[RMDB]
Source: RMDB library M2RFPK, as collected in RNAgym. An RNA of 207 nucleotides, treated with 2A3 and read out base by base. As a SHAPE reagent, 2A3 marks flexible, mostly unpaired nucleotides at the ribose 2'-OH. The RNA was probed in 150 mM KOAc, 10 mM MgCl2 and 150 mM bicine (pH 8.5) at 24 C. 2A3 adducts were read by reverse transcription with SuperScript II with manganese.
RNA sequence: GGGAACGACUCGAGUAGAGUCGAAAACACAGGAUCGUGUGGAAGUCCUGCUCGGGGCGGAAGCAUUAAAACCAUUCGAGCUAGUCAAUGCGUGACGUGUCUCUCCGCAGCGUGUUGGCGAAUGUAACAAGCUGCCUCUCGUUCGCGAGAGGCAGAACUACCACCACUACUUCGGUAGUGGUGGUAGAAAAGAAACAACAACAACAAC
Reactivity to 2A3 in 0.01 (KOAc 150mM, MgCl2 10mM, bicine 150mM(pH8.5), 24C), signal-to-noise 1, nucleotides 027 to 156: c010a000c010a010g300g030a240u210c240g090u060g000u080g080g000a060a000g000u050c000c000u000g030c050u000c000g000g000g080g030c040g000g090a020a000g140c040a060u190u300a020a110a070a150c040c040a000u040u060c130g050a000g080c050u160a060g070u000c000a000a090u000g010c000g020u020g040a250c000g130u040g080u000c110u040c040u040c150c000g000c070a050g000c000g000u060g040u020u010g040g010c000g020a010a010u060g050u160a040a130c060a040a000g050c000u000g000c000c000u030c000u000c000g010u020u010c160g050c000g010a000g000a000g000g000c000a000g000a000a000